[RMDB]
RNA sequence: GGGAACGACUCGAGUAGAGUCGAAAAGGCAGCGUUCCGGCCGGGCCGGCCCUCGCGAACCCCGGCGCAGCUCCGCACCCUGUUACGCCGGGUCAGCGGUGUCGACGCCGUCAUCGACAAGGUCACCACGUUCGUUAACGUUCGCGUUAACGAACGUAAAAGAAACAACAACAACAAC
Reactivity to DMS in 0.01 (KOAc 150mM, MgCl2 10mM, bicine 150mM(pH8.5), 24C), signal-to-noise 1, nucleotides 027 to 126: g000g000c030a020g000c040g000u030u020c030c020g000g000c220c120g000g080g050c020c050g030g000c060c000c000u000c080g000c030g000a060a120c160c030c130c020g000g010c020g010c090a050g000c020u000c140c030g040c050a080c000c000c010u000g000u000u000a070c100g000c090c170g020g000g020u110c200a220g000c000g050g000u000g070u000c030g000a140c100g000c090c000g000u030c040a180u000c000g050a060c080a020a160g000g000u020c080a100c180c010
Reactivity to 2A3 in 0.01 (KOAc 150mM, MgCl2 10mM, bicine 150mM(pH8.5), 24C), signal-to-noise 1, nucleotides 027 to 126: g050g000c010a040g000c040g010u050u000c080c040g030g010c020c000g000g030g000c030c020g010g000c000c010c010u100c040g000c030g010a050a050c000c000c000c010g000g000c010g000c020a000g000c000u060c070c000g000c010a120c000c000c000u010g070u070u090a070c040g000c000c000g000g000g020u010c000a020g000c000g000g000u030g040u050c040g040a080c010g000c000c000g030u060c010a050u040c010g020a050c030a070a040g000g010u000c020a020c090c030